[RMDB]
RNA sequence: GGGAACGACUCGAGUAGAGUCGAAAACUUAAUAAGCCCCAAGCUAUCCUAACUACUAACAUAGAGGAAAUAAGUUAAUUAAGGUCUCUCUUAGCAUUACACAAAGGCUCCCUCACUCUUGGUAGCACUUCAAUUCAUUCUUCGGAAUGAAUUGAAGAAAAGAAACAACAACAACAAC
Reactivity to 2A3 in 0.01 (KOAc 150mM, MgCl2 10mM, bicine 150mM(pH8.5), 24C), signal-to-noise 2, nucleotides 027 to 126: c000u060u030a110a050u100a300a090g060c000c000c000c000a050a030g000c000u050a030u100c010c000u020a110a110c030u060a060c000u020a140a000c060a110u100a060g010a070g040g060a020a120a060u150a100a010g080u090u040a050a080u230u020a070a040g030g030u000c050u000c000u000c030u150u000a000g060c040a060u010u120a060c050a010c000a130a120a010g050g020c020u000c010c010c000u000c000a060c050u080c000u000u030g050g010u060a010g050c050a030
Reactivity to DMS in 0.01 (KOAc 150mM, MgCl2 10mM, bicine 150mM(pH8.5), 24C), signal-to-noise 2, nucleotides 027 to 126: c060u000u000a080a080u010a090a170g010c050c000c020c070a170a140g010c050u000a040u000c020c070u000a090a100c070u000a050c060u010a070a090c100a160u010a040g000a050g000g000a030a070a150u000a060a080g000u010u000a000a050u000u000a070a050g010g000u000c020u000c000u020c070u030u000a090g010c030a100u000u000a050c120a060c070a050a040a080g000g000c070u010c010c000c010u000c050a030c020u000c040u020u000g000g010u000a070g020c170a130